[RMDB]
RNA sequence: GGGAACGACUCGAGUAGAGUCGAAAAUAACCAGACGAUGUGUGUAAGCACAAGGAAGAGACACCCAAUAACAGGUCUGUGAUGCCCGUAGAUGUUCGGGGCUCCACGCGCACUACAAUGAGUGGUGCUUCUGCGAAUCAUUCGUGAUUCGCAGAAGAAAAGAAACAACAACAACAAC
Reactivity to 2A3 in 0.01 (KOAc 150mM, MgCl2 10mM, bicine 150mM(pH8.5), 24C), signal-to-noise 4, nucleotides 027 to 126: u120a000a030c000c000a010g000a010c030g070a130u060g020u010g010u010g030u140a090a070g050c010a010c030a020a060g070g010a100a070g040a010g010a060c010a110c010c010c000a040a050u190a100a030c050a070g000g100u020c020u040g100u050g050a040u150g060c000c000c000g030u030a070g060a190u160g100u150u120c050g000g000g000g000c010u020c020c020a080c020g050c000g020c020a000c010u030a040c070a100a180u300g020a050g040u020g000g010u000g000
Reactivity to DMS in 0.01 (KOAc 150mM, MgCl2 10mM, bicine 150mM(pH8.5), 24C), signal-to-noise 3, nucleotides 027 to 126: u010a130a180c050c030a040g010a090c080g010a150u000g000u000g000u000g010u030a120a150g000c000a020c040a080a070g040g000a130a070g020a050g000a100c080a110c040c000c040a080a100u030a080a080c120a070g000g020u010c010u000g000u030g020a050u050g020c040c000c000g000u020a070g000a130u030g010u000u000c070g000g020g000g030c030u000c090c090a030c060g000c100g000c020a020c030u000a010c050a110a050u030g010a150g010u000g010g000u000g010
Conditions: 150 mM KOAc, 10 mM MgCl2 and 150 mM bicine (pH 8.5), 24 C. An RNA of 177 nucleotides, treated with 2A3 and DMS and read out base by base. For 2A3 the reverse transcriptase was SuperScript II with manganese. Source: RMDB libraries RFM100 and RFMREP, as collected in RNAgym. For 2A3, 2,069 sequencing reads were counted.